[RMDB]
RNA sequence: GGGAACGACUCGAGUAGAGUCGAAAACUGUCCUACGCUCAGCGCAACAACCGCAGACAUGCGACGGCCCCCGCCGGGACGCCAAUCCCAGUGCGAGGGCCUGACCACCGAGGAAGUUAGGGCUUCCUUAUAUAUACCGAUUCGUCGGUAUAUAUAAAAAAGAAACAACAACAACAAC
Reactivity to 2A3 in 0.01 (KOAc 150mM, MgCl2 10mM, bicine 150mM(pH8.5), 24C), signal-to-noise 9, nucleotides 027 to 126: c040u050g040u050c000c010u020a030c040g030c020u040c020a040g020c010g000c040a040a130c020a070a060c100c020g030c030a030g050a150c050a100u120g010c020g020a010c020g020g000c000c000c000c000c000g000c000c010g010g000g010a020c030g070c100c020a020a050u010c000c000c010a050g050u110g110c010g000a040g000g000g000c000c000u000g000a000c000c000a030c010c040g010a030g030g030a150a040g030u090u140a050g020g030g000c000u010u010c000c000
Reactivity to DMS in 0.01 (KOAc 150mM, MgCl2 10mM, bicine 150mM(pH8.5), 24C), signal-to-noise 9, nucleotides 027 to 126: c160u020g000u010c010c010u010a060c080g000c020u010c050a070g010c050g000c080a090a090c150a090a110c140c020g000c050a070g000a110c240a090u010g010c040g000a280c270g000g010c000c000c000c010c000g020c010c020g000g000g000a020c070g000c210c280a110a300u000c000c000c000a060g040u040g020c000g000a070g000g000g010c000c000u000g000a180c300c020a060c070c070g010a070g000g000a040a050g010u010u020a080g010g000g000c010u000u000c000c010
Source: RMDB libraries RFM100 and RFMREP, as collected in RNAgym. An RNA of 177 nucleotides, treated with 2A3 and DMS and read out base by base. Values are in units of 0.01, from 0 to 300, in steps of 10.